[RMDB]
RNA sequence: GGGAACGACUCGAGUAGAGUCGAAAAGUAUGGAUGCCACCGUGACGGCUCAAUCACACAAGUGCCAACGAUAACGAGGCGCUCGCUAUUGCUGCGUAACUGACGGCCUGACGGUCUGACUUUACAAAAAACGAAAAGUGGUUCGCCACUUUUCGAACAAUUUGUAUGCGUUCGCGCAUACAAAUUGAAAAGAAACAACAACAACAAC
Reactivity to 2A3 in 0.01 (KOAc 150mM, MgCl2 10mM, bicine 150mM(pH8.5), 24C), signal-to-noise 5, nucleotides 027 to 156: g060u050a040u130g020g050a050u080g040c030c020a020c010c030g030u040g060a080c130g000g010c020u060c140a070a130u130c030a050c020a010c010a140a060g000u010g020c000c000a090a050c060g050a080u080a120a020c040g010a050g220g060c130g070c130u030c000g020c020u040a050u130u150g040c050u030g000c040g020u030a060a040c030u020g040a020c030g020g000c000c010u050g040a020c020g010g000u000c010u010g030a040c010u050u080u090a040c080a020a100a020a050a060a020c000g000a000a000a000a010g010u010g030g030u040u060c160g050c050c000a000c000u000u010u000u000c020g000a020a000
Reactivity to DMS in 0.01 (KOAc 150mM, MgCl2 10mM, bicine 150mM(pH8.5), 24C), signal-to-noise 2, nucleotides 027 to 156: g010u000a140u000g000g020a100u000g000c020c040a110c010c050g030u000g010a160c150g020g010c030u000c010a070a150u000c050a110c050a120c100a100a110g010u000g020c040c000a070a080c030g020a060u000a080a120c050g000a130g030g010c100g040c050u000c000g000c020u010a050u000u010g020c020u010g020c060g000u000a060a080c040u000g010a100c080g000g010c010c020u000g030a110c040g030g000u000c020u000g010a110c060u010u010u000a140c050a000a000a030a070a100a130c020g000a020a000a000a010g020u000g010g030u000u000c300g010c020c000a010c000u000u000u000u000c000g000a040a120
Chemical mapping of a 207-nucleotide RNA with 2A3 and DMS.
Source: RMDB library M2RFPK, as collected in RNAgym.
For DMS the reverse transcriptase was MarathonRT.
The 2A3 profile rests on 4,340 reads.